The record gives the reactivity of an RNA of 207 nucleotides to 2A3.
For 2A3 the reverse transcriptase was SuperScript II with manganese.

RNA sequence: GGGAACGACUCGAGUAGAGUCGAAAAAAAAGAUAGUUCCGAACAAUAAUUGGCGAAGAAUCUUACGCCAUGGCUGCUUAAUUACGAACUAAGUUUGUAAUAAUGAGCGUUGAGUGGAGCUGUUAAGAACAGCACCCGGCCACAUCUCACACGGCUUCAGUAUAGAUUUCUUCGGAAAUCUAUACUGAAAAGAAACAACAACAACAAC
Reactivity to 2A3 in 0.01 (KOAc 150mM, MgCl2 10mM, bicine 150mM(pH8.5), 24C), signal-to-noise 1, nucleotides 027 to 156: a000a000a000a000g090a020u080a040g010u030u080c040c040g030a040a000c030a070a000u260a140a020u150u050g010g000c020g010a100a010g010a200a170u090c050u140u040a040c010g000c000c000a000u010g000g030c010u020g010c030u050u020a120a060u010u010a060c000g000a000a000c020u160a250a130g040u030u000u000g010u010a010a020u000a050a100u080g040a000g010c040g020u070u040g030a000g020u140g010g000a020g020c010u000g030u030u030a160a110g040a100a010c000a010g000c020a030c050c020c000g000g000c010c000a070c000a070u060c020u070c030a090c010a000c150g100g000c020u050u000
For 2A3, 655 sequencing reads were counted.